[RMDB]
RNA sequence: GGGAACGACUCGAGUAGAGUCGAAAAACGAGAUCAAGAAUCUUACUGAGAAUGACAGAACCAACUUCUUUGAUGAGAUCAAGAUUGUUCAAAAAGAGGUUAUCUAAUAGCACUUUUUGUUAAACGCGCAUCAGGGAUGGCUGGUAUAGUCAUCCCAUGAUGGUCUCUGAUUCGUCAGAGACCAUCAAAAAGAAACAACAACAACAAC
Reactivity to 2A3 in 0.01 (KOAc 150mM, MgCl2 10mM, bicine 150mM(pH8.5), 24C), signal-to-noise 2, nucleotides 027 to 156: a000c040g010a020g010a060u050c030a020a090g020a150a060u010c020u020u070a040c000u030g030a010g020a070a060u140g030a070c060a080g140a120a030c010c000a040a080c050u020u000c010u020u060u000g130a200u010g010a070g020a060u060c020a010a010g010a040u010u120g010u090u080c010a060a000a000a000a000g100a110g040g020u060u040a010u030c110u200a070a070u030a160g020c000a010c000u050u000u020u010u020g040u010u080a020a100a000c050g030c010g030c140a030u050c070a080g000g000g000a010u000g000g030c040u040g000g190u170a070u070a110g020u020c000a000u000c000c000c000a000
Reactivity to DMS in 0.01 (KOAc 150mM, MgCl2 10mM, bicine 150mM(pH8.5), 24C), signal-to-noise 1, nucleotides 027 to 156: a110c060g020a080g010a060u010c030a120a200g040a160a090u000c010u000u000a140c070u000g010a090g010a030a080u000g010a260c070a200g030a090a170c080c040a200a050c030u010u000c010u000u010u040g010a090u000g000a020g000a110u020c100a100a300g000a110u020u000g020u020u000c050a000a070a020a080a050g000a210g000g010u010u000a030u000c140u000a120a080u010a040g020c010a270c000u000u000u020u000u000g040u020u000a060a070a100c050g000c050g030c050a040u000c090a140g030g020g000a010u010g010g000c020u000g070g020u000a070u000a040g000u000c030a010u000c000c000c000a020
The data come from the RNA Mapping Database (RMDB), library OK3TST. An RNA of 207 nucleotides, treated with 2A3 and DMS and read out base by base. For DMS the reverse transcriptase was MarathonRT. The reactions ran in a buffer of 150 mM KOAc, 10 mM MgCl2 and 150 mM bicine (pH 8.5), at 24 C. Values are in units of 0.01, from 0 to 300, in steps of 10. For 2A3, 1,077 sequencing reads were counted.